[RMDB]
RNA sequence: GGGAACGACUCGAGUAGAGUCGAAAAGAUAUGGACACGCAGAGACACGAGGGCACAGAACUACAUGUAUUGUCGGAAACGACAAGACAUGCUGUGCCCUCGUGUCGACGAAGCGUGUCCUAAGUCACAUUCGCGUUAUGUUCGCAUAACGCGAAUGAAAAGAAACAACAACAACAAC
Reactivity to DMS in 0.01 (KOAc 150mM, MgCl2 10mM, bicine 150mM(pH8.5), 24C), signal-to-noise 1, nucleotides 027 to 126: g030a140u000a300u000g020g000a010c000a020c010g060c010a060g000a240g010a000c000a010c000g000a040g010g010g000c010a020c000a010g010a050a050c110u010a300c010a010u000g020u000a020u000u000g000u000c000g000g000a070a140a210c020g020a020c010a020a000g000a000c000a000u000g000c020u020g000u000g000c000c000c010u000c010g010u000g000u000c000g000a030c190g000a170a140g010c000g020u000g000u000c000c000u000a010a060g010u000c020a260
Chemical mapping of a 177-nucleotide RNA with DMS. It was measured as part of the RMDB library TTRINS. DMS adducts were read by reverse transcription with MarathonRT.